Chemical mapping of a 177-nucleotide RNA with DMS and 2A3.

RNA sequence: GGGAACGACUCGAGUAGAGUCGAAAAGAUAUGGACCUGUACCUACCGACGAUCUCGGAAACGAGGGAGGUAAGUACUGGGUCCUAAGUCAAACGUUUUAUGACGGGUUCGCCCGUCAUAAAACGAACCUUACUUACUGCUUCGGCAGUAAGUAAGGAAAAGAAACAACAACAACAAC
Reactivity to DMS in 0.01 (KOAc 150mM, MgCl2 10mM, bicine 150mM(pH8.5), 24C), signal-to-noise 3, nucleotides 027 to 126: g010a040u000a300u010g000g010a000c000c000u000g020u000a020c000c030u000a000c000c000g000a060c250g020a040u000c000u000c000g010g000a130a100a230c010g020a010g000g000g000a010g010g030u000a000a030g010u000a000c000u020g030g010g000u000c000c010u000a010a090g000u000c040a110a120a260c010g010u000u000u000u000a000u000g000a000c000g000g000g020u000u020c220g000c000c000c000g000u000c000a000u000a000a000a000a000c000g010a010a070
Reactivity to 2A3 in 0.01 (KOAc 150mM, MgCl2 10mM, bicine 150mM(pH8.5), 24C), signal-to-noise 2, nucleotides 027 to 126: g030a020u100a060u210g000g000a010c000c020u000g000u010a010c010c000u010a010c010c000g220a300c030g000a180u000c000u010c010g070g000a100a060a040c010g010a000g010g000g010a000g000g020u020a000a010g000u010a010c040u060g030g020g000u000c000c000u020a100a020g050u030c060a170a080a090c030g000u010u020u010u000a010u010g010a000c000g000g000g030u060u080c230g080c070c000c010g010u000c000a000u000a000a000a000a010c000g000a000a000
For DMS the reverse transcriptase was MarathonRT. Values are in units of 0.01, from 0 to 300, in steps of 10.